[RMDB]
RNA sequence: GGGAACGACUCGAGUAGAGUCGAAAAAGUAGAAGCCAAGGAUUGGGCUCUCCUGAUCAUCCUGUGAACUGAGUGAGGGUAGAAACCAGUUCCUGGCCCAACCCUGCAGUGGGCACAGAGUAGACACAUACGUGGUUGUAUUCGUACAACCACGUAUAAAAGAAACAACAACAACAAC
Reactivity to DMS in 0.01 (KOAc 150mM, MgCl2 10mM, bicine 150mM(pH8.5), 24C), signal-to-noise 4, nucleotides 027 to 126: a110g000u020a110g000a220a210g000c000c010a030a050g000g010a030u010u000g010g020g020c140u000c030u000c020c010u000g000a160u000c020a060u000c070c050u000g000u010g010a130a130c180u010g000a060g010u000g000a130g010g000g010u010a060g010a030a070a130c020c010a020g010u000u000c020c030u000g000g000c020c040c050a070a070c030c020c010u000g010c070a080g030u000g000g000g000c010a050c050a050g000a110g010u010a050g010a220c130a050c200
Reactivity to 2A3 in 0.01 (KOAc 150mM, MgCl2 10mM, bicine 150mM(pH8.5), 24C), signal-to-noise 2, nucleotides 027 to 126: a010g130u130a010g000a150a000g030c010c010a050a000g040g000a060u030u050g010g030g000c040u000c000u010c000c020u030g030a050u040c010a080u040c010c000u120g100u100g070a210a140c130u080g020a040g040u040g030a020g020g010g040u110a030g050a030a030a010c000c000a020g000u030u000c000c020u020g000g000c040c000c000a040a060c000c000c020u040g060c010a040g030u070g020g030g030c050a020c010a060g100a010g060u120a000g080a060c050a000c010
Structure probing data (DMS and 2A3) for a 177-nucleotide construct. Values are in units of 0.01, from 0 to 300, in steps of 10. The RNA was probed in 150 mM KOAc, 10 mM MgCl2 and 150 mM bicine (pH 8.5) at 24 C. For DMS the reverse transcriptase was MarathonRT. The DMS profile rests on 3,990 reads.